[RMDB]
RNA sequence: GGGAACGACUCGAGUAGAGUCGAAAAUUGCCGAUCGGUAUGGAUGCCACCGUGACGUCUCAAUCACACAAGUGCCAACGAUAACGAGGCGCUCGCUAUUGCUGCGUAACUGACGGCCUGACGGUCUAAAACAGAUUCGUGUUCGCACGAAUCUGAACAACUACCCACAGUUCGCUGUGGGUAGUUGAAAAGAAACAACAACAACAAC
Reactivity to 2A3 in 0.01 (KOAc 150mM, MgCl2 10mM, bicine 150mM(pH8.5), 24C), signal-to-noise 3, nucleotides 027 to 156: u150u100g050c020c000g090a190u010c030g010g010u070a040u120g020g080a070u130g020c030c010a020c030c030g010u010g030a040c000g010u000c000u020c020a040a080u040c010a020c000a010c030a170a080g070u030g100c030c030a170a040c090g070a090u070a130a040c060g010a010g010g010c020g030c050u020c000g030c030u070a070u100u120g060c040u000g010c000g000u020a090a050c010u030g000a040c020g000g010c000c010u050g000a010c030g030g010u030c110u150a050a040a030a050c010a000g000a010u000u010c010g000u010g030u070u080c140g030c080a000c000g000a000a000u000c000u000g000a010a000
Reactivity to DMS in 0.01 (KOAc 150mM, MgCl2 10mM, bicine 150mM(pH8.5), 24C), signal-to-noise 1, nucleotides 027 to 156: u000u020g030c060c040g010a020u000c070g000g050u000a070u000g000g010a130u030g040c030c010a040c030c070g010u010g000a120c010g040u000c070u000c080a070a120u000c080a070c070a090c090a070a040g040u000g040c040c040a080a140c040g040a060u010a080a100c050g010a130g000g020c080g060c070u000c010g000c020u010a110u010u000g010c000u000g010c000g000u000a020a090c080u000g010a100c120g040g000c000c020u020g020a120c070g000g030u000c020u010a000a030a090a180c000a020g010a020u000u000c020g060u010g040u000u040c300g040c040a020c000g020a010a010u000c010u000g000a040a070
An RNA of 207 nucleotides, treated with 2A3 and DMS and read out base by base. For DMS the reverse transcriptase was MarathonRT. The reactions ran in a buffer of 150 mM KOAc, 10 mM MgCl2 and 150 mM bicine (pH 8.5), at 24 C. Values cover nucleotides 27 to 156.